[RMDB]
RNA sequence: GGGAACGACUCGAGUAGAGUCGAAAACGACAGCCUCUGCUGCCAACGGCGGAACCGAGAAUACUGCUGCUUUUGAGGCGGCAUUGAAGAAAUUGACAGGGUAGGUAGGAGCCUCACUCGAAACAUCAUCGGAUCCUUGAGGUCCAGUGACUGAAUGCCAAUGCAUUGCAUUCGUGCAAUGCAUUGGAAAAGAAACAACAACAACAAC
Reactivity to DMS in 0.01 (KOAc 150mM, MgCl2 10mM, bicine 150mM(pH8.5), 24C), signal-to-noise 1, nucleotides 027 to 156: c060g010a050c030a060g020c060c050u130c050u000g000c000u010g010c010c000a130a130c090g000g020c030g050g000a110a270c030c020g000a200g000a150a120u000a030c030u020g010c030u000g000c050u000u000u000u000g010a160g010g020c020g040g050c030a040u000u020g010a140a170g000a100a100a140u000u000g010a110c080a150g000g000g000u000a020g000g000u010a090g010g030a280g030c000c010u010c060a040c020u000c090g020a130a180a100c090a080u000c000a050u000c040g060g030a050u000c000c000u000u030g020a080g000g000u000c000c000a030g010u000g010a030c070u000g000a000a060u010g000
Reactivity to 2A3 in 0.01 (KOAc 150mM, MgCl2 10mM, bicine 150mM(pH8.5), 24C), signal-to-noise 4, nucleotides 027 to 156: c110g060a020c020a010g030c000c020u020c030u040g010c030u040g000c050c020a060a040c050g010g010c000g010g020a050a040c050c050g090a040g050a130a080u110a140c020u030g070c000u000g020c030u090u070u130u300g130a090g000g000c000g000g000c000a020u030u070g020a040a040g020a020a100a100u180u140g040a040c060a050g050g020g050u060a040g020g040u020a050g010g080a040g050c010c020u020c020a020c010u040c000g040a010a110a020c040a100u100c010a040u080c070g010g010a020u000c020c000u080u210g020a080g000g000u000c000c020a010g010u030g030a030c040u050g100a110a070u200g020
Source information:
Chemical mapping of a 207-nucleotide RNA with DMS and 2A3. Conditions: 150 mM KOAc, 10 mM MgCl2 and 150 mM bicine (pH 8.5), 24 C. Source: RMDB library OK3TST, as collected in RNAgym. Values cover nucleotides 27 to 156. High 2A3 reactivity points to a flexible backbone, as in loops and unpaired stretches.